[RMDB]
RNA sequence: GGGAACGACUCGAGUAGAGUCGAAAACUUGGUGCUGGGCAGGCUUCUCAUUCUGAACCGAGAGGAUGGGAGAGGAAGCCAGUGGGUAACAUGUACCUGCUCCGUGCAGCACACACAGGCUGCUGCCUACACACCACUUCUUCGGAAGUGGUGUGUAAAAAGAAACAACAACAACAAC
Reactivity to 2A3 in 0.01 (KOAc 150mM, MgCl2 10mM, bicine 150mM(pH8.5), 24C), signal-to-noise 1, nucleotides 027 to 126: c020u030u190g090g010u030g020c000u010g020g050g010c010a030g030g020c000u060u000c010u000c010a070u020u000c100u020g080a250a180c000c000g010a060g000a000g160g020a040u050g030g010g010a050g000a020g050g020a020a020g020c000c030a030g010u020g000g000g010u040a150a040c060a230u150g070u120a040c010c020u000g020c030u000c040c020g070u100g070c000a000g030c010a020c000a010c010a000c010a040g070g000c020u060g010c060u070g010c000c010
Reactivity to DMS in 0.01 (KOAc 150mM, MgCl2 10mM, bicine 150mM(pH8.5), 24C), signal-to-noise 2, nucleotides 027 to 126: c050u000u000g020g030u000g030c050u010g020g020g060c050a230g000g040c020u000u000c000u010c000a160u000u000c070u000g000a090a220c090c050g050a210g000a120g010g030a030u010g000g020g000a030g000a300g000g000a080a040g000c020c030a050g040u010g000g000g000u000a070a120c140a130u000g020u010a050c040c010u010g000c040u000c120c160g010u020g000c000a040g020c020a040c060a090c070a300c150a060g000g000c020u010g010c090u020g020c040c030
The record gives the reactivity of an RNA of 177 nucleotides to 2A3 and DMS. The RNA was probed in 150 mM KOAc, 10 mM MgCl2 and 150 mM bicine (pH 8.5) at 24 C. The 2A3 profile rests on 1,200 reads. DMS adducts were read by reverse transcription with MarathonRT.